Conditions: 150 mM KOAc, 10 mM MgCl2 and 150 mM bicine (pH 8.5), 24 C. The record gives the reactivity of an RNA of 177 nucleotides to DMS and 2A3. For DMS, 1,297 sequencing reads were counted. For 2A3 the reverse transcriptase was SuperScript II with manganese. It was measured as part of the RMDB library TTRDES.

[RMDB]
RNA sequence: GGGAACGACUCGAGUAGAGUCGAAAAGAUAUGGACGCUAGAUGGGAGCUGCUGAUCGGAAACGAUCAAACAGCAUCGAUCAUCGGCGUCCUAAGUCAAAACAUGACUCCGUUCGCGGAGUCAUGAACGCGAAACAUAGGUUCGCCUAUGUUUCGCGAAAAGAAACAACAACAACAAC
Reactivity to DMS in 0.01 (KOAc 150mM, MgCl2 10mM, bicine 150mM(pH8.5), 24C), signal-to-noise 1, nucleotides 027 to 126: g060a040u000a100u000g000g000a000c000g020c020u000a090g010a020u000g020g010g020a140g000c030u000g000c100u000g010a030u000c010g040g000a020a030a040c000g010a000u000c000a010a030a100c000a000g020c020a240u010c300g020a130u000c000a000u000c020g000g000c000g000u000c000c000u010a000a020g000u000c030a130a150a130a170c000a010u000g000a020c000u000c000c040g040u000u030c260g000c020g010g040a010g000u000c000a000u000g000a030a100
Reactivity to 2A3 in 0.01 (KOAc 150mM, MgCl2 10mM, bicine 150mM(pH8.5), 24C), signal-to-noise 1, nucleotides 027 to 126: g000a000u020a000u070g000g010a010c020g030c050u080a240g010a020u020g020g040g070a140g030c000u000g030c000u000g010a010u000c000g020g000a000a010a000c020g000a000u010c000a010a070a040c010a010g000c000a070u300c260g100a130u020c000a010u010c010g020g010c010g010u000c000c000u000a000a000g000u000c000a010a020a030a120c020a030u010g000a000c010u000c000c020g030u080u130c250g000c030g120g000a000g000u020c000a010u000g000a030a030